[RMDB]
RNA sequence: GGGAACGACUCGAGUAGAGUCGAAAACAGCACCUUCACUCUUCUAUCAUUCCUGUGUGAAUGCCUAGAUUUAUUAAGGAUGCAAGAGAGAAGAACGGGAAGUUCGAAGACUUGCGGCAAGUUUCUCCGGCUGAUGAUCUUUCGAGAUCAUCAGCCGAAAAGAAACAACAACAACAAC
Reactivity to 2A3 in 0.01 (KOAc 150mM, MgCl2 10mM, bicine 150mM(pH8.5), 24C), signal-to-noise 1, nucleotides 027 to 126: c060a000g120c020a060c000c000u000u050c040a030c030u070c000u040u040c000u020a100u100c000a130u000u030c000c000u100g100u050g050u110g300a040a000u070g000c000c040u070a100g000a010u130u210u140a070u040u160a130a040g020g000a030u060g000c080a110a030g020a000g000a040g030a250a000g000a000a040c040g120g070g100a020a080g030u030u030c000g090a160a000g040a060c020u030u000g080c060g060g040c080a000a010g040u000u000u000c030u000c000